[RMDB]
The record gives the reactivity of an RNA of 207 nucleotides to 2A3. Conditions: 150 mM KOAc, 10 mM MgCl2 and 150 mM bicine (pH 8.5), 24 C. For 2A3 the reverse transcriptase was SuperScript II with manganese. Source: RMDB library M2RFPK, as collected in RNAgym.
RNA sequence: GGGAACGACUCGAGUAGAGUCGAAAAGUCCCCAGUAUGACUUUAAACUGCUGACUCAUACAUACUGACACCGGUUGCUCAACAGGCUGUGUGGGACAAUAGAAUAACAAGGCUGUCAAUUUGAGCUAAAACUCCUCGGGGUUCGCCCCGAGGAGAACCCAUGUCAUAUCUUCGGAUAUGACAUGGGAAAAGAAACAACAACAACAAC
Reactivity to 2A3 in 0.01 (KOAc 150mM, MgCl2 10mM, bicine 150mM(pH8.5), 24C), signal-to-noise 2, nucleotides 027 to 156: g000u020c000c010c030c000a000g010u010a000u100g010a010c020u100u300u020a000a000a000c020u000g000c000u010g020a030c020u030c020a020u070a170c040a020u110a070c030u030g050a010c010a030c060c010g150g000u070u090g020c020u030c020a060a060c000a030g110g000c020u050g020u030g050u030g090g020g010a030c020a100a080u070a140g100a060a030u160a150a060c050a060a000g120g000c070u020g050u110c000a030a100u020u050u090g020a010g000c000u050a100a090a100a100c000u010c000c000u000c010g040g000g000g000u030u020c080g090c000c010c050c000g010a010g000g000a000g000a000a000